[RMDB]
RNA sequence: GGGAACGACUCGAGUAGAGUCGAAAAGUCCGCCGUACACGUCGAACGUCUCCGAGGAGCGGGCGAAGUGGGCCACCUCCAGGCCGUCCAGGGACGGCACCACGCCGCCGUCGGUCACGAGGUAGCAUGAUUAGGACUGAUUCGUCAGUCCUAAUCAAAAAGAAACAACAACAACAAC
Reactivity to 2A3 in 0.01 (KOAc 150mM, MgCl2 10mM, bicine 150mM(pH8.5), 24C), signal-to-noise 2, nucleotides 027 to 126: g050u020c040c020g000c020c020g090u070a070c030a010c030g050u020c030g010a080a040c000g070u050c050u040c030c010g080a200g130g000a010g050c030g010g000g000c010g000a060a010g020u070g010g080g000c030c010a010c010c000u000c020c030a030g000g000c010c000g010u050c040c040a070g070g000g090a120c030g020g010c010a030c080c060a070c140g010c000c000g000c000c000g020u020c010g000g010u010c020a000c090g000a000g000g000u010a030g010c040a100
Reactivity to DMS in 0.01 (KOAc 150mM, MgCl2 10mM, bicine 150mM(pH8.5), 24C), signal-to-noise 5, nucleotides 027 to 126: g010u010c010c020g020c060c090g020u010a160c040a040c020g010u000c030g000a020a060c030g000u010c010u000c010c050g020a190g040g000a040g010c020g010g000g010c010g010a030a040g020u000g000g000g010c010c020a050c010c010u000c010c170a300g010g000c010c010g010u010c050c210a120g010g030g000a080c010g010g000c020a060c180c170a130c200g010c020c010g020c010c020g000u000c000g020g010u000c020a150c210g000a040g000g010u000a050g020c040a140
About this RNA:
The data come from the RNA Mapping Database (RMDB), library OK2TST. This 177-nucleotide RNA was probed chemically with 2A3 and DMS. For 2A3, 4,204 sequencing reads were counted. For DMS the reverse transcriptase was MarathonRT.